[RMDB]
RNA sequence: GGGAACGACUCGAGUAGAGUCGAAAAAUCGAGGACAUCGAUGGCUGAACCUCAGAUGGGAUGUGGCUUCCCGGUCUCACCAGGUUGCUCAUGCGAUCUCUCCUGAGAAUGUGAAAUCGUUGCAGCCCGUAGUAUCCCGAUUCGUCGGGAUACUACGAAAAGAAACAACAACAACAAC
Reactivity to 2A3 in 0.01 (KOAc 150mM, MgCl2 10mM, bicine 150mM(pH8.5), 24C), signal-to-noise 9, nucleotides 027 to 126: a000u080c050g010a040g050g100a040c040a130u030c030g050a050u060g040g000c010u030g020a080a100c010c000u020c010a020g020a090u140g030g010g030a030u050g040u070g060g000c000u020u010c010c000c000g000g010u090c110u050c050a080c020c000a010g000g010u020u020g020c020u060c180a060u160g040c040g070a030u000c030u000c000u030c020c010u050g010a040g070a120a130u160g050u040g100a100a110a060u100c070g020u030u070g020c010a000g010c000c010
Reactivity to DMS in 0.01 (KOAc 150mM, MgCl2 10mM, bicine 150mM(pH8.5), 24C), signal-to-noise 5, nucleotides 027 to 126: a030u020c020g020a070g000g020a090c130a050u010c030g010a050u010g000g000c040u000g020a150a070c120c020u000c030a070g010a130u020g000g010g010a040u010g020u020g010g010c040u000u000c010c010c010g020g000u000c140u000c180a130c050c080a060g010g000u000u010g010c030u020c100a090u000g010c090g010a030u000c030u000c030u000c060c020u000g000a060g010a110a070u020g020u020g000a090a090a050u010c030g010u000u010g000c030a080g010c000c030
Source information
The record gives the reactivity of an RNA of 177 nucleotides to 2A3 and DMS. It was measured as part of the RMDB library OK1LIB. For 2A3 the reverse transcriptase was SuperScript II with manganese. Conditions: 150 mM KOAc, 10 mM MgCl2 and 150 mM bicine (pH 8.5), 24 C. For DMS, 10,789 sequencing reads were counted.